[RMDB]
RNA sequence: GGGAACGACUCGAGUAGAGUCGAAAAGUGAGUGACAGGGGAAAUGGGGAUGGACUGGAAGUGGGCAGCAUGGAGCUGACCUUCAUCAUGGCUUGGCCAACAUAAUGCCUCUUCCCCUUGUCUCUCCGAUAAGCAAUUCGUUCGCGAAUUGCUUAUCAAAAGAAACAACAACAACAAC
Reactivity to 2A3 in 0.01 (KOAc 150mM, MgCl2 10mM, bicine 150mM(pH8.5), 24C), signal-to-noise 2, nucleotides 027 to 126: g090u070g000a020g000u000g010a010c000a010g000g030g030g000a010a040a070u270g050g020g000g010a020u060g030g060a080c060u050g090g030a100a040g010u050g030g110g040c000a000g030c020a020u290g270g070a150g000c000u030g060a230c000c000u030u010c030a100u000c020a080u060g010g000c080u090u180g110g000c000c000a010a030c000a020u240a090a050u200g010c020c020u020c000u000u020c010c010c000c020u000u020g000u010c000u000c000u000c010c000
Reactivity to DMS in 0.01 (KOAc 150mM, MgCl2 10mM, bicine 150mM(pH8.5), 24C), signal-to-noise 2, nucleotides 027 to 126: g010u010g000a030g020u000g000a030c020a040g000g020g020g000a000a040a030u010g000g010g000g000a070u010g010g000a110c240u020g010g030a130a020g020u000g010g010g010c030a020g000c010a170u040g000g040a290g000c020u000g010a060c020c000u000u000c010a090u000c110a150u000g020g000c030u000u000g000g010c020c030a050a280c130a090u010a050a080u020g000c000c000u000c000u000u000c000c000c000c030u000u020g010u000c000u000c000u000c000c160